RNA sequence: GGGAACGACUCGAGUAGAGUCGAAAAGAUAUGGAUAUCCUACCAGCAACAGCCUGACGGUCUCGGAAACGAGAUUCAGGACAUGCUGAUGGAUAUCCUAAGUCAAAACGUCCUGUUCGCAGGACGAGAUGUAAGUGUAGUUCGCUACACUUACAUCAAAAGAAACAACAACAACAAC
Reactivity to DMS in 0.01 (KOAc 150mM, MgCl2 10mM, bicine 150mM(pH8.5), 24C), signal-to-noise 9, nucleotides 027 to 126: g000a020u000a160u010g000g000a010u000a000u000c000c000u000a070c200c010a010g020c000a100a070c280a100g000c000c000u000g010a060c300g010g000u000c000u000c000g000g000a030a030a080c000g010a010g000a010u000u000c000a010g010g000a020c020a300u010g010c000u000g010a180u000g000g000a010u000a000u000c000c000u000a000a060g000u000c010a090a040a100a200c030g000u000c000c000u000g000u000u010c250g030c010a010g000g000a010c000g010a020
Reactivity to 2A3 in 0.01 (KOAc 150mM, MgCl2 10mM, bicine 150mM(pH8.5), 24C), signal-to-noise 9, nucleotides 027 to 126: g000a000u020a010u060g000g000a000u000a000u000c000c010u060a160c300c030a000g000c100a120a220c070a250g010c000c000u030g020a050c110g120g010u010c000u000c000g000g010a030a020a010c000g000a000g000a010u020u020c000a000g010g040a010c060a200u300g000c000u000g010a030u030g000g000a000u000a000u000c000c000u000a010a000g010u000c020a020a030a110a170c020g000u000c000c000u010g040u060u100c300g010c060a000g000g000a010c010g000a070
The record gives the reactivity of an RNA of 177 nucleotides to DMS and 2A3. For 2A3 the reverse transcriptase was SuperScript II with manganese. As a SHAPE reagent, 2A3 marks flexible, mostly unpaired nucleotides at the ribose 2'-OH. Values are in units of 0.01, from 0 to 300, in steps of 10. It was measured as part of the RMDB library TTRDES.